[RMDB]
RNA sequence: GGGAACGACUCGAGUAGAGUCGAAAAAAAUAUCUUCGUGGAUGAAUUCAAUGCAGCAGCAUCACGAGAGUCAUAUCUAGCGCCGAUUAAUGUCAGGUCCACGGUGUCACCCAACCCUGGUAUAUAGUCCUUCUUGAGCUUGAUCCAGCGACCACCGGUAGAUUAAUGCGUUCGCGCAUUAAUCUACAAAAGAAACAACAACAACAAC
Reactivity to 2A3 in 0.01 (KOAc 150mM, MgCl2 10mM, bicine 150mM(pH8.5), 24C), signal-to-noise 2, nucleotides 027 to 156: a000a000a070u120a100u090c110u100u040c030g030u010g030g080a030u030g090a060a290u300u120c220a120a160u150g030c050a040g010c020a000g000c010a030u060c060a020c040g080a060g000a010g120u060c010a060u070a050u120c070u060a000g100c020g050c060c000g040a030u070u210a090a060u180g050u090c070a080g000g060u000c020c000a010c050g010g000u070g020u100c130a120c020c030c000a000a040c060c030c000u000g000g080u020a040u020a000u090a150g040u100c020c030u070u190c060u170u050g030a030g030c030u000u030g010a040u080c010c010a010g010c030g080a070c030c000a030c070c020g060